An RNA of 177 nucleotides, treated with DMS and 2A3 and read out base by base. The DMS profile rests on 2,559 reads. Source: RMDB library OK2TST, as collected in RNAgym. For DMS the reverse transcriptase was MarathonRT.
RNA sequence: GGGAACGACUCGAGUAGAGUCGAAAAUUAUGACCCGUUUUGGUAUGGGGAUGAGCAAAAGUUUCGUUUCAGUAACGCGAAGUUGCAGGAUUGGUUGGGUGGCGGCCCUGUCGGCAAGGAUGGUACCACUCACCAUGGUUUUCGAACCAUGGUGAGUAAAAGAAACAACAACAACAAC
Reactivity to DMS in 0.01 (KOAc 150mM, MgCl2 10mM, bicine 150mM(pH8.5), 24C), signal-to-noise 3, nucleotides 027 to 126: u020u010a060u010g010a190c010c010c010g010u010u010u000u010g010g000u000a060u010g020g010g000g000a070u000g020a100g010c090a050a050a100a140g000u010u000u000c040g020u010u020u010c130a140g010u000a050a090c160g030c080g020a060a110g010u000u010g000c040a110g020g020a080u000u010g000g050u010u000g000g030g020u010g000g020c110g010g000c020c010c040u010g000u000c050g020g000c070a060a080g010g000a070u010g000g010u010a120c090c060
Reactivity to 2A3 in 0.01 (KOAc 150mM, MgCl2 10mM, bicine 150mM(pH8.5), 24C), signal-to-noise 1, nucleotides 027 to 126: u170u050a150u140g070a060c000c000c000g010u020u030u060u160g040g020u050a040u050g010g000g020g040a020u110g120a050g030c060a060a000a010a170g010u030u020u110c040g000u000u060u070c060a010g080u090a030a020c060g020c000g020a100a010g040u070u040g070c010a000g030g000a150u130u100g040g130u070u020g020g040g020u070g040g000c000g000g000c000c030c000u090g030u070c040g000g030c040a070a040g090g000a060u020g000g070u050a050c020c000